[RMDB]
RNA sequence: GGGAACGACUCGAGUAGAGUCGAAAAUGCUAAACACCGAAAGCGGGUCGUACAGCCAGGGCCCCACUUCCGUGAACAGGAUACAGUAAUAUCCUUUGAGGAAGAUGUCAGAAGCUUCGCAACCCCCGGCAAGCGGGUCAUUGGUCUUGUAGCAAACCACACCUAAUUGUUUCGACAAUUAGGUGUGAAAAGAAACAACAACAACAAC
Reactivity to DMS in 0.01 (KOAc 150mM, MgCl2 10mM, bicine 150mM(pH8.5), 24C), signal-to-noise 2, nucleotides 027 to 156: u000g020c050u000a070a050a110c020a280c020c000g050a070a080a100g020c070g040g010g020u010c030g000u000a040c060a040g000c030c010a080g010g020g030c020c000c030c020a180c050u000u000c000c000g000u010g000a050a090c120a120g040g010a030u000a030c050a270g000u010a050a300u000a010u000c010c000u000u000u010g000a090g030g000a010a010g000a150u000g030u000c030a040g010a060a080g050c060u000u000c140g000c040a100a300c010c000c000c000c010g040g020c010a080a100g000c080g010g010g010u000c000a100u010u000g020g030u010c010u000u000g030u000a080g000c070a070a120a170c080
Reactivity to 2A3 in 0.01 (KOAc 150mM, MgCl2 10mM, bicine 150mM(pH8.5), 24C), signal-to-noise 3, nucleotides 027 to 156: u050g010c000u050a090a110a020c090a040c070c080g140a170a160a050g140c150g000g000g030u070c080g040u070a020c010a040g000c000c010a020g000g000g000c010c000c010c000a020c010u010u000c010c000g060u080g090a060a050c030a020g000g020a000u020a030c110a040g140u210a120a080u030a040u030c000c000u040u050u040g080a080g000g000a010a010g020a040u060g000u010c000a020g050a170a010g080c000u040u090c060g000c030a100a300c000c010c040c010c000g010g000c010a020a000g010c000g020g000g000u030c040a180u080u000g000g000u060c030u080u050g030u000a030g030c000a000a000a090c020